The record gives the reactivity of an RNA of 177 nucleotides to DMS.
[RMDB]
RNA sequence: GGGAACGACUCGAGUAGAGUCGAAAAGGCCGGUGUGUCGGUGGUCAGCGGCGGCACCGACGUCCACCUGGUGCUGGUCGAUCUGCGUGAUUCCCCACUGGAUGGCCAGGCCGCCGAGGACCUGCUGCGAAGCCAGCUGUUUCGACAGCUGGCUUCGAAAAGAAACAACAACAACAAC
Reactivity to DMS in 0.01 (KOAc 150mM, MgCl2 10mM, bicine 150mM(pH8.5), 24C), signal-to-noise 1, nucleotides 027 to 126: g020g020c020c030g010g010u010g010u010g020u010c020g020g010u000g020g000u010c000a070g010c000g010g010c030g010g000c040a120c120c120g010a130c170g010u000c060c030a070c050c050u000g040g020u010g020c060u000g010g000u000c050g000a020u000c010u000g010c160g020u030g010a130u000u000c080c000c020c010a020c020u010g000g000a030u010g000g010c020c020a080g000g000c010c010g000c030c000g000a090g000g010a050c010c010u000g030c010u010g000

Reactivities are given for positions 27 through 126. The data come from the RNA Mapping Database (RMDB), library OK2TRN. DMS adducts were read by reverse transcription with MarathonRT. The reactions ran in a buffer of 150 mM KOAc, 10 mM MgCl2 and 150 mM bicine (pH 8.5), at 24 C.